[RMDB]
RNA sequence: GGGAACGACUCGAGUAGAGUCGAAAACAGUUAUUGUUACAGUGGGCUAUCGCCUGACCAAGCUGCAGAGUUGCUCUGUGUGAUGCGCUUAUUUGGACACCCUCUGCUCUCCGCACAACAAGCAGCCCUCGCUUAUCGGAUUCGUCCGAUAAGCGAGAAAAGAAACAACAACAACAAC
Reactivity to DMS in 0.01 (KOAc 150mM, MgCl2 10mM, bicine 150mM(pH8.5), 24C), signal-to-noise 1, nucleotides 027 to 126: c000a050g030u020u010a050u010u010g010u000u000a120c150a070g050u010g010g000g010c090u000a090u000c160g010c030c040u000g020a160c080c090a080a170g060c090u000g080c080a060g010a050g010u000u000g000c120u010c040u010g010u010g070u030g000a060u000g000c080g000c010u010u000a130u010u000u020g020g000a090c090a120c080c000c050u000c050u010g010c030u010c030u000c020c050g030c030a070c100a000a010c090a040a050g000c050a040g000c070c080
Reactivity to 2A3 in 0.01 (KOAc 150mM, MgCl2 10mM, bicine 150mM(pH8.5), 24C), signal-to-noise 1, nucleotides 027 to 126: c020a020g060u080u160a190u300u090g030u040u080a110c030a060g030u080g030g040g000c030u050a040u300c090g010c010c030u010g010a070c030c030a050a030g000c000u090g020c050a060g080a020g130u110u100g090c030u000c010u070g030u040g040u070g130a080u090g020c040g000c090u130u150a150u130u190u060g030g000a030c010a050c020c020c000u030c030u020g070c000u000c000u000c010c000g000c010a030c030a190a000c000a040a000g060c010a010g000c010c000